[RMDB]
Conditions: 150 mM KOAc, 10 mM MgCl2 and 150 mM bicine (pH 8.5), 24 C. The record gives the reactivity of an RNA of 177 nucleotides to DMS. The data come from the RNA Mapping Database (RMDB), library M2PK50. For DMS the reverse transcriptase was MarathonRT.
RNA sequence: GGGAACGACUCGAGUAGAGUCGAAAAUUCCCCUAUUUCGAUAGGGGAACACCUGCGGGCGGCUCGCAGUUCCGACUUCCUCCACCUCUGAGUCAAAGGGCGAUAGGCCUCGGUUCGCCGAGGCCAACCAUCUUGGAUCUUUCGAGAUCCAAGAUGGAAAAGAAACAACAACAACAAC
Reactivity to DMS in 0.01 (KOAc 150mM, MgCl2 10mM, bicine 150mM(pH8.5), 24C), signal-to-noise 2, nucleotides 027 to 126: u020u000c000c010c000c000u020a000u000u000u000c090g010a010u020a010g000g000g000g000a030a000c160a110c070c010u000g000c060g020g020g000c050g020g010c040u000c040g010c050a060g020u000u000c030c010g000a060c060u000u000c030c010u010c030c060a100c100c000u000c040u000g030a080g010u000c070a020a070a070g000g010g010c090g030a120u010a110g000g010c000c000u000c000g000g010u000u010c140g020c020c040g020a000g020g010c000c020a000a010